[RMDB]
RNA sequence: GGGAACGACUCGAGUAGAGUCGAAAACCUAAAGUAAUCGCAAACGACGAUAACUACUCUCUAGCGGCUUAGGCCAGCUAGCGCUCCUUCUAUGUAUUCUUGUGGACUAGAUUUUGGAGUGUCACCCUAACACCUGAUCGCGAUGGAAACCCUGGCCGAGUAAUAAGUACUUCGGUACUUAUUACUCAAAAGAAACAACAACAACAAC
Reactivity to 2A3 in 0.01 (KOAc 150mM, MgCl2 10mM, bicine 150mM(pH8.5), 24C), signal-to-noise 7, nucleotides 027 to 156: c020c000u040a080a060a010g050u040a050a060u050c030g000c080a160a150a160c110g200a050c020g000a050u060a130a050c040u070a030c020u060c010u010c010u050a010g000c000g040g000c010u080u080a090g070g080c000c030a030g000c020u010a010g000c010g020c020u010c010c010u050u010c020u010a080u220g030u020a100u100u090c040u090u160g050u110g070g010a020c010u010a030g000a140u070u100u080u220g020g000a020g010u030g030u020c040a080c010c020c010u040a070a010c010a020c030c010u020g020a060u080c050g010c030g080a030u050g020g000a050a050a030c010c000c030u010g000g030c040c040
Reactivity to DMS in 0.01 (KOAc 150mM, MgCl2 10mM, bicine 150mM(pH8.5), 24C), signal-to-noise 2, nucleotides 027 to 156: c020c010u000a110a070a130g030u000a070a100u010c040g000c030a170a150a220c100g010a120c030g010a060u000a050a100c030u000a060c020u000c040u010c030u000a050g000c030g030g030c030u000u000a140g050g010c000c020a050g040c020u000a030g000c040g000c020u010c030c010u010u000c010u000a080u010g020u010a080u000u010c070u000u000g010u010g030g020a060c020u000a060g000a130u000u000u000u000g020g010a070g000u000g000u000c060a090c050c010c010u000a080a090c060a070c020c030u010g020a070u000c030g000c060g030a110u000g000g000a080a080a090c000c010c010u000g000g020c060c070